[RMDB]
RNA sequence: GGGAACGACUCGAGUAGAGUCGAAAAGCGGCCGACGUCCACGAUCUUGUCUCGGCACUCGAAUCGAACGGCGUCUUCCUGCCGGUGAUCCCACUGGUGGAGAGCGCCGCCGGCGUCCUCGCAGCGCGUCCGCCCCUCGAUUCGUCGAGGGGCGGACAAAAGAAACAACAACAACAAC
Reactivity to 2A3 in 0.01 (KOAc 150mM, MgCl2 10mM, bicine 150mM(pH8.5), 24C), signal-to-noise 2, nucleotides 027 to 126: g020c010g020g000c050c010g030a030c000g000u070c030c030a040c050g000a070u000c070u070u050g020u010c000u030c120g170g000c010a020c010u030c010g040a050a090u080c010g000a010a090c010g020g000c000g000u040c000u080u060c010c000u000g040c000c000g040g000u010g020a260u080c090c120c000a000c000u000g000g040u020g000g020a150g010a040g050c030g030c050c000g060c000c020g000g000c040g000u000c000c040u020c010g080c030a080g040c000g050c040